[RMDB]
RNA sequence: GGGAACGACUCGAGUAGAGUCGAAAAGCCGCCCAAGUUCGAGCAUGGGCCAAUUCCGAGCGAAGAGUCCGCGGGGGAAGGAUCAGUGCCCGAGAGGGGUAAAGUGGUAAAGAGUAUUGGAACGCCGAGGAGAUGUCUCCCAAGAAGGCCAAAAGAGGUAUACCACAUUGUUCGCAAUGUGGUAUACAAAAGAAACAACAACAACAAC
Reactivity to 2A3 in 0.01 (KOAc 150mM, MgCl2 10mM, bicine 150mM(pH8.5), 24C), signal-to-noise 2, nucleotides 027 to 156: g070c030c040g060c030c030c020a080a050g060u030u170c080g060a070g040c090a050u080g020g070g000c000c020a020a110u100u000c020c020g030a010g030c070g030a080a060g010a070g100u050c050c020g020c090g030g000g000g000g030a070a000g040g010a030u040c020a050g050u020g120c000c000c030g070a040g010a000g020g020g000g000u060a060a130a000g060u070g050g030u050a030a060a010g030a030g030u080a140u160u080g000g030a090a040c060g070c100c020g010a030g030g000a060g010a010u140g080u060c010u020c060c010c000a020a070g040a030a030g030g000c030c040a050a060a050a000g110a030g050
Reactivity to DMS in 0.01 (KOAc 150mM, MgCl2 10mM, bicine 150mM(pH8.5), 24C), signal-to-noise 1, nucleotides 027 to 156: g040c050c060g040c080c020c030a040a300g020u000u000c000g030a100g030c110a090u000g060g030g060c000c060a060a160u010u010c020c000g050a160g030c090g000a240a260g000a200g000u000c040c060g020c100g030g000g010g080g020a090a110g050g010a040u000c070a180g030u000g000c020c010c010g030a090g000a110g000g040g040g010u010a000a120a120g020u020g030g050u010a100a150a150g000a100g000u000a250u010u000g050g000a040a100c080g030c030c060g000a030g010g000a130g000a290u000g000u000c030u110c030c020c000a060a190g000a120a130g000g030c000c070a020a030a020a170g000a190g010